[RMDB]
RNA sequence: GGGAACGACUCGAGUAGAGUCGAAAAGAUAUGGAGACCCCCAGUCAACAGCUGGCUCGGAAACGAGUCCAGACAUGACUACGCGUCUCCUAAGUCAAAGUGACGUAAUGUUCGCAUUACGUCACAAGCCAUCUUAAAUGUUCGCAUUUAAGAUGGCAAAAGAAACAACAACAACAAC
Reactivity to DMS in 0.01 (KOAc 150mM, MgCl2 10mM, bicine 150mM(pH8.5), 24C), signal-to-noise 5, nucleotides 027 to 126: g010a060u010a250u010g000g000a020g000a020c000c030c070c150c130a090g000u000c000a050a090c240a160g010c000u000g000g000c000u000c000g010g000a100a120a130c000g010a020g000u030c000c010a010g000a040c070a140u010g000a020c000u000a050c180g000c260g000u000c000u000c000c000u010a020a100g010u010c060a070a110a140g010u000g010a010c010g010u000a000a010u000g010u010u010c210g020c010a010u000u000a000c000g010u000c000a010c000a030a070
Reactivity to 2A3 in 0.01 (KOAc 150mM, MgCl2 10mM, bicine 150mM(pH8.5), 24C), signal-to-noise 4, nucleotides 027 to 126: g010a030u090a010u120g000g000a000g000a000c010c010c000c050c030a010g000u000c030a060a110c030a210g020c010u000g010g000c000u010c000g020g020a030a030a040c000g010a000g060u080c010c030a000g030a060c010a090u160g000a010c010u040a050c090g090c100g020u020c000u000c000c010u020a160a020g090u080c070a150a040a090g000u000g000a000c000g010u000a010a000u010g040u050u100c240g000c100a000u000u000a010c000g000u000c000a000c000a010a000

Structure probing data (DMS and 2A3) for a 177-nucleotide construct.
It was measured as part of the RMDB library TTRDEL.
DMS adducts were read by reverse transcription with MarathonRT.
Conditions: 150 mM KOAc, 10 mM MgCl2 and 150 mM bicine (pH 8.5), 24 C.